[RMDB]
RNA sequence: GGGAACGACUCGAGUAGAGUCGAAAACUGCCAAGGCUGGUAGGGCCCAUAGCUCAGUGGUAGAGUGCCUCCUUUGCAAGGAGGAUGCCCUGGGUUCGAAUCCCAGUGGGUCCAUCUCACGUGCCCGUGGUCUUCCUGUCUUCGGACAGGAAGACCAAAAAGAAACAACAACAACAAC
Reactivity to DMS in 0.01 (KOAc 150mM, MgCl2 10mM, bicine 150mM(pH8.5), 24C), signal-to-noise 1, nucleotides 027 to 126: c080u010g000c030c030a120a260g030g000c000u000g070g000u000a150g030g010g000c000c000c060a010u020a090g000c000u000c020a260g010u000g010g000u030a060g020a090g070u000g000c000c000u000c000c000u000u000u000g000c300a300a090g000g000a000g000g000a000u000g000c120c000c000u010g000g000g060u000u010c090g000a300a150u000c000c000c000a060g050u000g010g000g020u000c050c010a090u000c070u000c140a300c050g000u000g010c000c000c040g080
Source: RMDB library OK2TRN, as collected in RNAgym. Chemical mapping of a 177-nucleotide RNA with DMS. The DMS profile rests on 407 reads.